[RMDB]
An RNA of 207 nucleotides, treated with 2A3 and read out base by base.
RNA sequence: GGGAACGACUCGAGUAGAGUCGAAAAAUAGCUGACGAGGCUUCGUUUUCCUCACUAUGUCUGGCCUCGUCUCUUCCUUUCUAGAAAGAUAUAAAACCGUGCAUACCGACGGAUGGGGAUAGGACGAAGUCACCCUCGGAAGUACACAACACAGUACUCCUUCCCAAGUAUUCGUACUUGGGAAGGAAAAAGAAACAACAACAACAAC
Reactivity to 2A3 in 0.01 (KOAc 150mM, MgCl2 10mM, bicine 150mM(pH8.5), 24C), signal-to-noise 1, nucleotides 027 to 156: a000u140a020g060c070u060g000a010c010g050a020g020g000c000u120u020c080g000u010u000u180u080c000c000u150c010a070c070u210a230u210g150u030c060u000g050g000c050c050u000c000g000u010c000u020c000u000u000c000c020u020u130u010c020u020a080g150a150a130a020g050a070u040a000u000a160a170a040a040c060c050g050u020g000c110a080u060a090c040c050g020a000c000g050g000a020u050g000g040g000g000a000u040a080g080g000a040c040g020a030a000g070u070c050a190c070c000c000u050c010g000g050a020a010g010u010a010c020a010c000a050a030c040a040c020a060g050u040a030c020
Reactivities are given for positions 27 through 156.